Chemical mapping of a 177-nucleotide RNA with DMS and 2A3. The reactions ran in a buffer of 150 mM KOAc, 10 mM MgCl2 and 150 mM bicine (pH 8.5), at 24 C. For 2A3, 12,513 sequencing reads were counted. Source: RMDB library OK1LIB, as collected in RNAgym. DMS adducts were read by reverse transcription with MarathonRT.
[RMDB]
RNA sequence: GGGAACGACUCGAGUAGAGUCGAAAACGUGUUAAGUCUUCUCGUCUAUUUGCGACAGAUAGGGCGUAGUUAGGAUAUAAUUGUCGUGUAGAUAUGUCAGGACAGGAACUCCUUGGCGGGUGGCACGCCAUGCUGGUAGUUUCGACUACCAGCAUGGAAAAGAAACAACAACAACAAC
Reactivity to DMS in 0.01 (KOAc 150mM, MgCl2 10mM, bicine 150mM(pH8.5), 24C), signal-to-noise 5, nucleotides 027 to 126: c070g000u030g010u000u010a070a100g010u000c030u000u000c020u000c050g000u000c030u010a030u010u030u010g000c050g000a070c050a060g010a070u010a060g000g000g000c030g010u010a030g010u030u020a050g000g000a070u020a050u020a060a100u030u000g010u000c010g000u010g000u000a050g000a070u030a070u020g000u010c060a060g000g000a020c050a090g010g000a100a080c130u010c010c020u010u010g000g020c030g000g010g010u010g000g000c020a060c080g000
Reactivity to 2A3 in 0.01 (KOAc 150mM, MgCl2 10mM, bicine 150mM(pH8.5), 24C), signal-to-noise 4, nucleotides 027 to 126: c010g000u020g010u040u070a080a020g030u000c020u030u000c010u000c010g020u000c010u000a040u030u120u100g010c010g010a000c010a010g050a060u060a030g040g040g020c030g000u000a000g010u020u040a020g010g020a020u040a000u020a070a130u030u030g020u020c020g000u000g020u020a020g030a090u080a040u100g040u020c030a000g040g000a010c000a000g040g010a010a010c020u000c000c000u020u040g020g010c000g010g010g010u010g010g000c010a000c040g020